[RMDB]
RNA sequence: GGGAACGACUCGAGUAGAGUCGAAAAUCUAACUUCGGUUAGAGACAUGCGUACUACUGAACGCACCGGGUCGAUAAGUAGCUUCCCAAAUAGGAAGCUACUUUUGACGACCACGGUGAACUACGUUCAGUAUCGCUACUAUAGACUUCGGUCUAAACUUUAUCGCUGAAUUCGUUCAGCGAUAAAGAAAAGAAACAACAACAACAAC
Reactivity to DMS in 0.01 (KOAc 150mM, MgCl2 10mM, bicine 150mM(pH8.5), 24C), signal-to-noise 2, nucleotides 027 to 156: u010c000u010a030a020c010u000u000c300g010g020u000u000a010g010a100g030a120c090a090u000g040c020g000u010a130c150u000a030c010u000g020a010a030c000g000c000a070c000c010g030g020g020u000c010g020a150u000a010a010g000u000a000g010c000u000u010c000c000c010a080a180a160u000a030g000g020a020a010g000c020u000a000c000u000u000u000u000g000a250c080g000a020c000c000a060c010g010g000u000g000a040a170c060u000a160c020g000u000u000c000a030g000u000a010u000c040g040c020u000a150c100u000a170u020a030g000a010c000u000u000c280g050g020u000c000u000a020a080a140